Conditions: 150 mM KOAc, 10 mM MgCl2 and 150 mM bicine (pH 8.5), 24 C. Structure probing data (2A3) for a 177-nucleotide construct. It was measured as part of the RMDB library OK1LIB.

[RMDB]
RNA sequence: GGGAACGACUCGAGUAGAGUCGAAAAUGCCGCCGCGCUGGAGGAGGUCAUGCGCGUCGGGGGCGCCACGCUGGCCAUUGGCUUUGCGGUCGCCAAGGAUCUUGCCGCCGGACGGUUGGUGCACGUGACUUGCGUUCGCAUUCGUGCGAACGCAAGUAAAAGAAACAACAACAACAAC
Reactivity to 2A3 in 0.01 (KOAc 150mM, MgCl2 10mM, bicine 150mM(pH8.5), 24C), signal-to-noise 1, nucleotides 027 to 126: u110g030c020c020g000c000c000g010c000g010c000u030g200g000a170g060g010a020g070g090u000c050a060u140g050c010g010c000g100u170c030g040g040g000g030g000c000g010c020c020a230c040g030c030u060g000g000c000c020a300u070u300g040g010c000u070u070u280g040c090g000g010u000c010g040c010c020a020a020g050g000a080u010c000u050u030g080c010c000g000c000c100g050g000a080c030g070g000u110u130g070g010u090g030c090a010c090g060u060g010